[RMDB]
RNA sequence: GGGAACGACUCGAGUAGAGUCGAAAAGCUCUAGGAGACUAGAGCGAUACGUUAGAGAGCUCGUGACAUGACUAACGGAUAGCCAGGUACGAGGUUGCCAGAGGACAUAGCUAUAGCUAUGUCCAAAGACCAAUCAUACGUUCGCGUAUGAUUGGUCAAAAGAAACAACAACAACAAC
Reactivity to 2A3 in 0.01 (KOAc 150mM, MgCl2 10mM, bicine 150mM(pH8.5), 24C), signal-to-noise 2, nucleotides 027 to 126: g000c000u000c000u010a030g020g030a080g010a090c000u000a000g000a000g000c000g000a010u030a020c040g030u060u090a020g040a000g000a040g150c030u040c100g070u070g070a010c040a010u130g070a090c000u000a070a020c010g000g030a040u020a010g090c000c000a030g020g020u060a070c050g060a030g010g070u040u020g040c030c020a060g000a040g050g000a000c000a020u000a000g000c010u160a060u070a300g030c000u000a010u050g000u010c000c000a000a000a000
Reactivity to DMS in 0.01 (KOAc 150mM, MgCl2 10mM, bicine 150mM(pH8.5), 24C), signal-to-noise 2, nucleotides 027 to 126: g000c000u010c000u010a010g000g000a240g070a300c000u010a010g000a000g040c000g000a090u030a020c070g000u020u010a050g000a130g010a160g020c000u020c030g030u000g000a070c030a230u010g000a160c030u010a050a080c080g000g000a090u020a060g020c020c000a080g000g000u000a010c030g010a030g000g000u000u000g010c050c030a140g030a260g010g010a010c030a000u020a010g000c000u020a130u040a120g010c000u000a000u000g020u020c010c000a010a040a080
This 177-nucleotide RNA was probed chemically with 2A3 and DMS. For 2A3 the reverse transcriptase was SuperScript II with manganese. Values cover nucleotides 27 to 126. The DMS profile rests on 3,725 reads. The 2A3 profile rests on 1,072 reads. For DMS the reverse transcriptase was MarathonRT. The data come from the RNA Mapping Database (RMDB), library OK1LIB. The RNA was probed in 150 mM KOAc, 10 mM MgCl2 and 150 mM bicine (pH 8.5) at 24 C.